RNA sequence: GGGAACGACUCGAGUAGAGUCGAAAAAGGUGUGGAGCGACCUUAAACAGUUCUGGUGGUGCUCUGAAUGGAGUGCUCUACUGAGAUUAUAAAAUAGAAGGUAAGCUAUUAUCUCUUACAGCAGGGCGAAGCACUCGGGGGUUCGCCCCCGAGUGAAGGCACAUAGAAAGUUCGCUUUCUAUGUGCCAAAAGAAACAACAACAACAAC
Reactivity to 2A3 in 0.01 (KOAc 150mM, MgCl2 10mM, bicine 150mM(pH8.5), 24C), signal-to-noise 2, nucleotides 027 to 156: a000g000g000u010g000u060g040g000a000g030c030g000a020c010c000u100u100a100a080a020c030a080g010u050u040c010u030g060g040u030g010g010u050g000c020u010c050u030g090a070a080u130g010g020a020g030u050g000c010u070c060u080a050c050u040g000a000g050a020u060u110a050u150a180a080a170a020u070a070g050a120a030g020g030u120a030a020g000c040u000a020u090u000a030u100c040u030c010u060u090a090c050a030g030c020a030g010g000g000c050g010a030a010g060c000a000c000u010c010g010g010g000g000g000u040u010c060g030c030c000c000c010c000g010a000g000u000g000a000a000
Structure probing data (2A3) for a 207-nucleotide construct. Values cover nucleotides 27 to 156. The reactions ran in a buffer of 150 mM KOAc, 10 mM MgCl2 and 150 mM bicine (pH 8.5), at 24 C. For 2A3, 966 sequencing reads were counted. For 2A3 the reverse transcriptase was SuperScript II with manganese.